[RMDB]
RNA sequence: GGGAACGACUCGAGUAGAGUCGAAAACAGAAGGUACCCGUAGGUAACAAGUGACACUAUGGAUCUGAUCUGGGGCUGGAUACCUCUAUCUUGGUGAUCCAGUUAAAAAACGUCUAGCGGGCCAAGCUAAAACCAAUGGAUUCGUCCAUUGGUUUUAAAAAGAAACAACAACAACAAC
Reactivity to 2A3 in 0.01 (KOAc 150mM, MgCl2 10mM, bicine 150mM(pH8.5), 24C), signal-to-noise 6, nucleotides 027 to 126: c010a000g040a060a010g030g020u040a040c010c000c000g010u010a010g000g050u060a020a030c050a140a290g040u010g040a010c000a000c020u010a010u040g010g010a010u020c010u030g040a160u040c010u020g000g000g040g010c000u000g000g010a010u040a040c010c020u030c020u100a230u170c090u070u140g020g010u060g060a010u000c000c010a000g000u000u010a030a000a010a000a000a000c020g050u010c020u050a020g040c030g010g010g050c030c010a050a020g010c020
Reactivity to DMS in 0.01 (KOAc 150mM, MgCl2 10mM, bicine 150mM(pH8.5), 24C), signal-to-noise 9, nucleotides 027 to 126: c030a040g010a080a300g000g000u000a070c100c010c020g000u010a020g000g010u030a020a040c030a120a060g000u030g000a180c300a020c030u000a020u000g000g010a050u000c010u000g000a140u010c030u000g000g010g010g010c000u000g000g000a010u000a020c010c000u020c300u030a090u040c170u020u000g010g020u000g010a050u000c000c000a010g010u000u000a000a040a070a050a040a070c140g010u010c060u010a060g010c030g000g010g010c070c050a070a110g010c150